[RMDB]
RNA sequence: GGGAACGACUCGAGUAGAGUCGAAAAUCCCAGCCAGGGGUUGUCAUCCUCAAGUUUCUUGAGCUUCUUGUUGGUUCGCCGGAGAUCCUUCUCGAGAAUUCGCCUUUUCUUCCUUUCUUCCACCCACUAACUAGGGAGUUCGCUCCCUAGAAAAGAAACAACAACAACAAC
Reactivity to DMS in 0.01 (KOAc 150mM, MgCl2 10mM, bicine 150mM(pH8.5), 24C), signal-to-noise 9, nucleotides 027 to 129: u010c000c000c050a160g040c180c100a110g000g000g000g040u030u020g030u010c110a080u040c110c020u020c070a060a110g030u000u020u040c040u040u000g000a100g010c150u030u010c050u020u030g040u050u000g020g000u030u040c050g020c050c010g000g000a110g020a080u030c060c020u000u000c020u020c030g030a040g010a150a120u000u040c060g030c030c020u000u000u000u000c040u040u000c020c030u000u000u000c010u020u020c030c030a100c000c020c000a080c070u030a040a160
Reactivity to 2A3 in 0.01 (KOAc 150mM, MgCl2 10mM, bicine 150mM(pH8.5), 24C), signal-to-noise 8, nucleotides 027 to 129: u010c000c000c000a000g040c000c030a030g000g020g010g010u030u050g030u090c030a110u060c020c020u020c020a050a050g040u030u070u030c010u030u060g040a030g020c010u070u040c010u080u120g090u050u080g020g010u040u060c050g000c020c010g020g010a040g010a030u030c010c000u040u050c020u020c020g050a040g020a070a120u080u050c030g040c000c000u030u030u040u040c000u010u060c000c000u010u040u030c000u020u010c000c010a060c010c000c000a060c030u060a090a010